[RMDB]
RNA sequence: GGGAACGACUCGAGUAGAGUCGAAAAGUGUAACAGGAAGAAAGUUGCAGCAUAUAUGCGGUGAAUUAUGCGGUGUCAUAGGAAUUGAGGAUUUAUGUAAGAUGCUGAUAAUGAGUAAGGAACCUUAACCAUCCAAUAGGUUCGCCUAUUGGAUGGUAAAAGAAACAACAACAACAAC
Reactivity to DMS in 0.01 (KOAc 150mM, MgCl2 10mM, bicine 150mM(pH8.5), 24C), signal-to-noise 4, nucleotides 027 to 126: g010u010g010u010a070a080c100a060g010g000a090a080g000a070a110a120g000u000u000g020c040a100g000c030a040u010a070u010a100u010g020c060g000g040u000g000a070a060u000u000a040u000g020c040g030g030u000g010u000c040a050u000a050g010g010a060a090u000u000g000a090g000g010a060u010u000u010a050u030g010u010a100a090g000a060u010g010c020u000g010a060u000a050a040u010g010a060g010u010a050a070g010g010a080a080c080c050u000u000a110
Reactivity to 2A3 in 0.01 (KOAc 150mM, MgCl2 10mM, bicine 150mM(pH8.5), 24C), signal-to-noise 3, nucleotides 027 to 126: g060u040g010u050a030a040c020a030g000g070a060a050g050a060a150a030g020u070u060g030c010a030g050c070a020u060a010u010a020u200g070c040g070g030u100g040a090a040u130u030a030u090g060c080g050g000u060g000u080c030a030u080a100g050g060a080a020u050u090g050a100g070g000a010u040u130u090a050u100g040u000a030a030g020a080u050g010c020u020g010a010u020a150a080u060g050a030g040u030a060a020g050g030a020a050c000c000u010u010a030

This 177-nucleotide RNA was probed chemically with DMS and 2A3.
The reactions ran in a buffer of 150 mM KOAc, 10 mM MgCl2 and 150 mM bicine (pH 8.5), at 24 C.
For 2A3, 2,066 sequencing reads were counted.
The data come from the RNA Mapping Database (RMDB), library RFMREP.